[RMDB]
RNA sequence: GGGAACGACUCGAGUAGAGUCGAAAAUCAGUGUAUACCUAUGGACGUGGGCAUAGACUUCGGAACCACAUUUAGUACUCUAUGCUAUUCGGCGUCGGGUGCAGGAGGUUGUACCAGGGUGGCAGGUAGCAUCUUUGUAGAAACGCAAGUAUUUGUCUAGCUAUCCAAAGUUCGCUUUGGAUAGCUAAAAAGAAACAACAACAACAAC
Reactivity to 2A3 in 0.01 (KOAc 150mM, MgCl2 10mM, bicine 150mM(pH8.5), 24C), signal-to-noise 3, nucleotides 027 to 156: u070c020a000g000u020g040u080a050u020a120c030c010u040a140u070g120g000a040c040g010u020g020g030g000c020a050u030a070g020a070c020u070u050c180g060g070a070a090c040c010a060c040a070u130u080u110a050g020u030a040c030u010c000u050a010u010g000c010u050a080u120u130c090g060g000c020g000u020c000g010g000g010u020g000c000a020g000g090a020g030g000u050u020g020u010a050c000c020a000g000g000g080u020g050g000c030a020g000g000u020a030g010c000a020u050c080u070u110u100g030u050a030g130a090a070a040c100g010c040a000a040g020u060a100u100u090u090g050u010c060
Reactivity to DMS in 0.01 (KOAc 150mM, MgCl2 10mM, bicine 150mM(pH8.5), 24C), signal-to-noise 1, nucleotides 027 to 156: u000c070a070g020u010g020u000a050u000a010c010c010u010a100u000g000g050a060c050g050u000g010g030g030c020a010u010a040g000a110c040u010u010c060g020g020a100a140c050c030a130c030a300u000u000u010a100g000u000a040c050u000c050u010a060u010g020c000u040a100u000u000c070g040g000c000g020u010c030g000g000g000u010g010c020a180g010g010a080g000g020u000u000g050u000a050c040c000a070g010g010g000u000g000g000c010a050g010g000u000a060g040c010a060u000c020u000u000u000g000u000a090g010a090a080a080c060g020c060a060a200g020u000a080u000u000u010g000u000c040
The record gives the reactivity of an RNA of 207 nucleotides to 2A3 and DMS. The RNA was probed in 150 mM KOAc, 10 mM MgCl2 and 150 mM bicine (pH 8.5) at 24 C. It was measured as part of the RMDB library OK3TST. For 2A3, 1,653 sequencing reads were counted. For DMS the reverse transcriptase was MarathonRT.